[RMDB]
RNA sequence: GGGAACGACUCGAGUAGAGUCGAAAAGUUUGAUCGGGAUACUCAUCAAAAUAAAACGAAACCGAGGAAGUUUCUCUUGUUAAUGGCGGGCCACAUAAAACCCUUAUGGGACUAAGCUGUAUAGCCGCGUAUCGAAUCGAUUCGUCGAUUCGAUACGAAAAGAAACAACAACAACAAC
Reactivity to 2A3 in 0.01 (KOAc 150mM, MgCl2 10mM, bicine 150mM(pH8.5), 24C), signal-to-noise 1, nucleotides 027 to 126: g010u010u000u060g010a040u090c280g000g000g120a090u110a200c250u150c070a010u000c030a000a000a010a000u300a130a050a000a020c000g080a010a010a010c000c000g010a000g000g140a040a050g000u000u110u000c050u020c000u000u140g080u070u110a300a170u120g000g010c070g020g000g060c000c010a000c000a030u090a000a150a000a000c000c000c000u070u030a120u090g010g010g010a000c030u010a000a130g050c000u000g000u080a190u020a050g000c000c000g020
Reactivity to DMS in 0.01 (KOAc 150mM, MgCl2 10mM, bicine 150mM(pH8.5), 24C), signal-to-noise 1, nucleotides 027 to 126: g000u010u030u020g000a030u010c190g000g000g040a110u040a000c010u000c110a030u030c010a060a000a060a000u000a160a110a060a130c090g000a070a060a040c100c020g000a060g000g000a140a190g000u000u000u010c000u020c040u000u000g010u010u000a020a180u000g000g060c060g020g020g000c010c070a040c160a160u000a140a050a100a140c030c000c010u000u040a060u000g040g000g000a060c140u000a020a110g000c060u000g010u030a030u000a010g000c020c030g010